[RMDB]
RNA sequence: GGGAACGACUCGAGUAGAGUCGAAAAGAUAUGGAUCCUGGCAGCGAGGAUCGGUCGGAUCGGAAACGAUCCAACCGGGAGCUGGCAGGAUCCUAAGUCAAAACAUCUCCUGUUCGCAGGAGAUGAACUACUAUACAACCUUCGGGUUGUAUAGUAGAAAAGAAACAACAACAACAAC
Reactivity to 2A3 in 0.01 (KOAc 150mM, MgCl2 10mM, bicine 150mM(pH8.5), 24C), signal-to-noise 6, nucleotides 027 to 126: g000a000u020a000u080g000g000a000u010c000c000u040g100g300c020a000g000c020g200a300g200g130a300u040c000g000g000u020c030g010g010a000u000c000g010g000a010a010a010c000g000a000u000c010c000a000a000c010c000g010g030g050a300g000c010u020g070g210c000a000g000g000a000u000c000c000u000a000a000g000u000c000a010a010a060a120c010a000u010c000u010c000c000u020g120u130u110c300g030c120a000g000g000a000g000a000u000g000a010a010
Reactivity to DMS in 0.01 (KOAc 150mM, MgCl2 10mM, bicine 150mM(pH8.5), 24C), signal-to-noise 6, nucleotides 027 to 126: g010a020u000a190u010g000g000a000u000c000c000u000g010g000c010a010g010c000g010a150g010g000a110u000c010g000g010u000c040g010g000a020u000c000g020g000a040a030a080c000g000a000u000c000c000a010a000c000c000g020g000g010a120g030c000u000g010g000c000a020g000g000a000u000c000c000u000a000a080g010u000c020a120a090a160a280c010a000u000c000u000c000c000u000g010u000u010c260g020c000a010g010g010a010g010a000u000g000a050a190